[RMDB]
RNA sequence: GGGAACGACUCGAGUAGAGUCGAAAAGGGUCCGACGUUCCUACCCUUUCUUACCUGUGGCCGGCAUGGUCCCAGCCUCCUCGCUGGCGCCGGCUGGGCAACAUUCCGAGGGGACCGUCCUCCUCGGCUCGAUGUUAGUUCGCUAACAUCAAAAGAAACAACAACAACAAC
Reactivity to DMS in 0.01 (KOAc 150mM, MgCl2 10mM, bicine 150mM(pH8.5), 24C), signal-to-noise 9, nucleotides 027 to 129: g010g000g010u040c160c170g010a300c020g040u010u010c020c020u020a030c040c020c020u010u010u020c130u030u020a120c030c030u030g010u040g010g050c050c010g020g050c000a140u070g050g010u040c300c000c010a040g000c000c110u060c090c050u020c170g020c020u000g000g000c200g000c010c000g010g030c020u000g030g040g010c000a080a070c090a140u040u050c030c000g020a030g010g010g000g010a130c120c170g010u040c050c020u020c030c010u000c030g020g020c300u020c060
Reactivity to 2A3 in 0.01 (KOAc 150mM, MgCl2 10mM, bicine 150mM(pH8.5), 24C), signal-to-noise 9, nucleotides 027 to 129: g030g000g000u060c080c050g080a090c020g070u010u000c000c000u000a020c000c000c000u000u030u020c110u060u100a130c000c010u060g040u130g120g040c000c000g020g000c060a150u200g050g020u120c020c010c020a010g010c000c020u150c030c030u090c090g010c010u020g010g000c030g000c020c000g030g010c000u020g000g010g010c020a090a040c010a170u200u040c010c000g010a000g000g010g000g010a030c050c080g120u140c010c010u020c000c000u000c000g000g000c000u030c060